[RMDB]
An RNA of 177 nucleotides, treated with 2A3 and DMS and read out base by base. For 2A3 the reverse transcriptase was SuperScript II with manganese. Values cover nucleotides 27 to 126. The reactions ran in a buffer of 150 mM KOAc, 10 mM MgCl2 and 150 mM bicine (pH 8.5), at 24 C.
RNA sequence: GGGAACGACUCGAGUAGAGUCGAAAAGAUAUGGAUCCCAAGGCGCUAUCAUAGCUCGGAAACGAGCACAUGAUAGAACUACGCUGCAGGAUCCUAAGUCAAACCUUCACCGUUCGCGGUGAAGGAACCCGAGAUAAUUGUUCGCAAUUAUCUCGGGAAAAGAAACAACAACAACAAC
Reactivity to 2A3 in 0.01 (KOAc 150mM, MgCl2 10mM, bicine 150mM(pH8.5), 24C), signal-to-noise 1, nucleotides 027 to 126: g040a000u100a040u160g010g010a000u000c030c000c000a020a010g020g000c030g030c010u010a020u010c000a020u030a030g000c000u000c010g040g010a110a080a070c000g000a010g000c060a050c050a000u030g000a010u000a000g020a030a000c060u230a040c060g000c000u070g060c120a000g000g020a000u000c000c000u030a140a020g050u000c010a060a030a190c010c000u000u000c000a000c020c000g080u090u120c300g050c020g120g000u020g010a000a010g000g020a030a020
Reactivity to DMS in 0.01 (KOAc 150mM, MgCl2 10mM, bicine 150mM(pH8.5), 24C), signal-to-noise 1, nucleotides 027 to 126: g010a000u000a300u010g010g000a000u000c000c000c010a110a300g000g000c040g000c000u010a000u000c000a000u010a050g020c010u000c000g000g030a120a120a150c000g030a000g010c000a030c150a020u000g000a000u000a010g000a040a070c140u000a300c030g000c000u000g000c300a170g000g010a000u000c000c010u000a030a080g000u010c010a100a100a210c000c000u000u000c000a040c000c000g020u000u040c130g010c030g020g040u000g020a000a020g010g010a000a000